[RMDB]
RNA sequence: GGGAACGACUCGAGUAGAGUCGAAAAACGUCGCUUCGGCGACGUAAGGAGGGGUCCUGGAGCGAGGCUUUUGACGAGCUGAAGCCUCCACGGCUCGAUAAGCUACCCACCGCUUGGCCAGGACGGAGGCACCCAGAUAUGAGCGUUCGCGCUCAAACGCACUAUAUUAAUUCGUUAAUAUAGUGCGAAAAGAAACAACAACAACAAC
Reactivity to DMS in 0.01 (KOAc 150mM, MgCl2 10mM, bicine 150mM(pH8.5), 24C), signal-to-noise 1, nucleotides 027 to 156: a000c010g010u000c010g030c010u000u000c300g020g000c000g040a020c010g000u000a030a050g050g000a160g010g000g000g030u000c020c030u010g010g000a060g000c020g000a160g010g010c000u010u000u040u000g010a180c150g030a040g080c010u000g030a060a080g000c000c010u000c010c040a300c050g000g010c000u020c030g000a100u010a090a050g030c100u000a080c050c010c020a300c050c010g010c010u000u000g010g010c060c030a060g000g000a040c020g020g010a000g080g000c050a170c010c000c010a300g030a110u000a160u010g010a040g050c020g010u000u060c140g050c000g000c010u000c010a000a060a260
Reactivity to 2A3 in 0.01 (KOAc 150mM, MgCl2 10mM, bicine 150mM(pH8.5), 24C), signal-to-noise 4, nucleotides 027 to 156: a010c010g000u000c010g010c010u070u070c300g150g010c000g000a000c010g000u010a020a040g100g060a060g000g060g070g000u010c000c000u000g020g000a000g020c040g020a090g050g090c040u080u120u090u180g200a110c010g000a000g000c000u000g010a030a000g010c000c000u000c000c010a000c010g000g000c010u010c010g010a050u020a100a010g020c030u090a200c020c040c030a020c060c000g000c040u080u160g180g010c010c000a000g000g010a010c020g010g000a010g010g010c000a030c000c010c000a060g040a130u300a120u170g000a000g000c030g020u110u160c280g040c000g010c110u040c040a030a030a010